[RMDB]
The data come from the RNA Mapping Database (RMDB), library M2RFPK.
The record gives the reactivity of an RNA of 207 nucleotides to 2A3.
The 2A3 profile rests on 711 reads.
The RNA was probed in 150 mM KOAc, 10 mM MgCl2 and 150 mM bicine (pH 8.5) at 24 C.
RNA sequence: GGGAACGACUCGAGUAGAGUCGAAAAGAAAGAAAGAAAGCGGUUGGGUGGGUCCAUCGACCGUCGUGGCGUAUUCGGACGCUUUACCACGACGCGAGGAAAUAGCGAGACCGACCACCUCCUUUAACAGAGGUAUAGUAGUUCGCUACUAUACCAAGUUAGCGUAAGGGUUCGCCCUUACGCUAACAAAAGAAACAACAACAACAAC
Reactivity to 2A3 in 0.01 (KOAc 150mM, MgCl2 10mM, bicine 150mM(pH8.5), 24C), signal-to-noise 1, nucleotides 027 to 156: g050a010a050a010g030a010a030a000g050a020a090a050g100c210g110g000u190u140g080g010g020u070g020g020g000u000c010c020a140u090c010g010a060c030c000g000u000c000g000u010g000g000c080g000u100a120u100u180c080g020g080a040c030g010c000u130u050u050a060c000c010a000c000g000a010c000g000c030g000a040g000g020a000a110a090u050a070g060c020g010a060g010a040c000c020g000a010c000c000a020c000c010u010c010c000u040u030u030a130a070c070a060g060a050g110g000u000a000u000a000g020u010a000g000u000u020c160g020c150u000a000c000u000a000u020a000c030c000a010a000